[RMDB]
RNA sequence: GGGAACGACUCGAGUAGAGUCGAAAAUACAUAUCAAACACGACAGAGCAGCUGCCCACAGAGGUGGGAAUUGGGAAUAAAAAUGAAAAAAUAAACAUGACAAGAGGAAGCCUUUUGCUGACCUAUGACAGAAACCUACCUUGAACUGGAAAGUAUGCGUAAAUGAUUAGUUCGCUAAUCAUUUACGAAAAGAAACAACAACAACAAC
Reactivity to 2A3 in 0.01 (KOAc 150mM, MgCl2 10mM, bicine 150mM(pH8.5), 24C), signal-to-noise 4, nucleotides 027 to 156: u080a000c040a020u170a020u150c070a050a080a050c060a010c120g100a040c040a030g010a000g030c000a000g000c020u040g020c010c020c000a030c010a030g170a040g030g070u020g010g000g000a020a020u100u060g010g020g020a040a040u110a110a130a050a030a020u100g050a120a130a020a010a040a020u220a060a120a030c060a040u140g040a040c020a040a040g000a020g050g010a000a050g010c020c000u050u120u070u170g010c030u020g020a020c000c000u040a070u080g020a020c020a050g070a040a020a010c000c020u030a030c000c000u040u040g030a060a040c020u010g000g040a090a030a000g040u090a040u160g030
Reactivity to DMS in 0.01 (KOAc 150mM, MgCl2 10mM, bicine 150mM(pH8.5), 24C), signal-to-noise 3, nucleotides 027 to 156: u000a050c040a120u010a180u000c050a080a030a130c040a080c050g010a140c000a060g010a140g020c040a130g000c080u000g020c000c000c000a070c070a150g040a090g050g040u010g000g020g010a020a030u010u000g020g000g020a110a130u010a020a060a060a150a130u010g010a010a020a040a100a070a060u000a100a090a080c020a160u000g010a090c050a060a090g010a050g010g010a110a110g020c020c050u000u010u010u010g010c010u000g010a090c060c050u000a080u030g020a110c060a070g000a100a030a120c030c040u010a030c040c030u010u000g010a070a090c090u020g000g020a090a030a100g020u000a080u000g000
This 207-nucleotide RNA was probed chemically with 2A3 and DMS. It was measured as part of the RMDB library OK3TST. The RNA was probed in 150 mM KOAc, 10 mM MgCl2 and 150 mM bicine (pH 8.5) at 24 C.